The data come from the RNA Mapping Database (RMDB), library OK2TRN. This 177-nucleotide RNA was probed chemically with DMS and 2A3. 2A3 adducts were read by reverse transcription with SuperScript II with manganese. 2A3 is a SHAPE reagent: it acylates the 2'-hydroxyl of flexible nucleotides of all four kinds.
RNA sequence: GGGAACGACUCGAGUAGAGUCGAAAAGUUCGAUCUUUUCCAACUUCCUCUUAUGUCCUAUUCAUGGAAAAGAUCGAUUGGCGUGAGACUGAGGAAGUGGUAUUUAUGUGAGGUCUCAUGCCUCACACUACUGCUAUGUAUUCGUACAUGGCAGUAGAAAAGAAACAACAACAACAAC
Reactivity to DMS in 0.01 (KOAc 150mM, MgCl2 10mM, bicine 150mM(pH8.5), 24C), signal-to-noise 9, nucleotides 027 to 126: g010u010u000c010g010a010u000c000u000u000u000u000c000c000a120a090c070u000u000c000c010u000c060u010u010a100u010g000u000c060c060u000a100u010u000c160a190u000g010g000a010a000a010a010g000a010u000c000g010a030u000u000g000g020c050g020u000g000a060g010a030c020u000g000a100g010g000a030a020g010u000g010g010u010a080u010u010u010a080u020g010u000g010a140g010g000u000c070u000c090a050u000g010c000c000u000c100a040c130a150
Reactivity to 2A3 in 0.01 (KOAc 150mM, MgCl2 10mM, bicine 150mM(pH8.5), 24C), signal-to-noise 9, nucleotides 027 to 126: g070u050u040c010g010a010u010c010u010u010u010u000c010c010a060a040c030u020u020c010c010u030c030u100u140a090u160g040u040c010c030u080a090u110u150c080a100u120g000g000a000a000a000a000g000a000u000c000g000a020u020u120g000g010c010g000u030g010a040g000a010c010u010g000a010g010g020a010a010g010u040g030g060u250a230u120u200u050a110u110g130u030g060a040g000g020u000c010u010c050a010u070g000c000c000u010c000a030c000a000